[RMDB]
RNA sequence: GGGAACGACUCGAGUAGAGUCGAAAAAUCUUGGCGAAGUCAGCGCGGAAGGAGCGCGCAACUGCUUACCCUCGCCUUUUUUUUUCCGCUCCCGUUCGCGAAAGCGUUCAGCGGAAAAGGGACCAAAUAUCUGAGAUAUAUUCGUAUAUCUCAGAUAAAAAGAAACAACAACAACAAC
Reactivity to 2A3 in 0.01 (KOAc 150mM, MgCl2 10mM, bicine 150mM(pH8.5), 24C), signal-to-noise 3, nucleotides 027 to 126: a000u070c050u040u050g010g000c010g000a040a010g030u070c110a090g030c030g010c020g040g030a190a130g210g090a110g170c020g000c010g000c010a010a020c020u060g010c030u050u120a070c000c000c030u030c000g060c000c000u080u030u000u010u010u000u000u020u020c020c000g000c010u050c030c070c020g010u010u000c000g000c000g030a090a030a010g000c010g020u010u010c030a000g000c000g010g050a000a000a000a010g020g010g000a030c090c040a070a070a080
Reactivity to DMS in 0.01 (KOAc 150mM, MgCl2 10mM, bicine 150mM(pH8.5), 24C), signal-to-noise 5, nucleotides 027 to 126: a060u010c080u010u000g010g010c010g010a030a030g000u000c090a150g020c010g020c010g010g010a150a110g010g000a140g020c000g010c010g020c020a170a030c040u000g000c090u000u000a150c070c010c020u000c030g010c000c010u000u000u000u000u000u000u000u000u000c000c010g010c010u000c170c090c070g010u000u010c000g020c010g000a090a070a140g000c000g020u000u000c020a060g010c000g010g000a000a000a010a030g010g000g010a100c120c100a060a070a110